[RMDB]
An RNA of 177 nucleotides, treated with 2A3 and DMS and read out base by base. The 2A3 profile rests on 1,138 reads. DMS adducts were read by reverse transcription with MarathonRT. Source: RMDB library RFMREP, as collected in RNAgym. The RNA was probed in 150 mM KOAc, 10 mM MgCl2 and 150 mM bicine (pH 8.5) at 24 C.
RNA sequence: GGGAACGACUCGAGUAGAGUCGAAAAAGUUCCUAGGAGGCUAGAAGAGCCAACCAACAGAGAAGGGAAAGCAGUCUGUUCUGAACAUAGGGACAUAAGUUCAUUCAUGCCAAGUAUCUUUCCAGCAUCGAUGACUUAAGUUCGCUUAAGUCAUCGAAAAAGAAACAACAACAACAAC
Reactivity to 2A3 in 0.01 (KOAc 150mM, MgCl2 10mM, bicine 150mM(pH8.5), 24C), signal-to-noise 1, nucleotides 027 to 126: a000g040u040u000c020c000u010a030g020g040a000g020g000c030u080a060g060a290a060g040a210g080c000c010a030a110c000c020a050a020c030a040g080a000g030a150a050g050g000g000a020a000a050g000c020a000g040u000c000u040g040u060u090c050u080g040a060a020c000a060u150a050g050g000g000a020c010a020u190a070a030g030u040u020c020a010u010u090c010a020u090g030c000c000a060a030g030u000a040u060c030u000u070u000c020c030a020g060c010a080
Reactivity to DMS in 0.01 (KOAc 150mM, MgCl2 10mM, bicine 150mM(pH8.5), 24C), signal-to-noise 2, nucleotides 027 to 126: a190g000u000u010c000c000u000a100g000g010a300g010g000c000u010a050g030a220a060g010a070g030c050c000a100a190c120c090a090a050c050a140g010a060g000a100a090g010g010g000a040a030a070g000c020a080g010u000c010u000g030u000u000c070u020g010a100a120c090a030u010a020g010g000g000a050c060a110u010a070a120g000u000u000c070a070u000u010c070a060u000g000c030c040a060a120g000u020a060u030c060u000u020u010c050c010a060g000c170a100
Values cover nucleotides 27 to 126.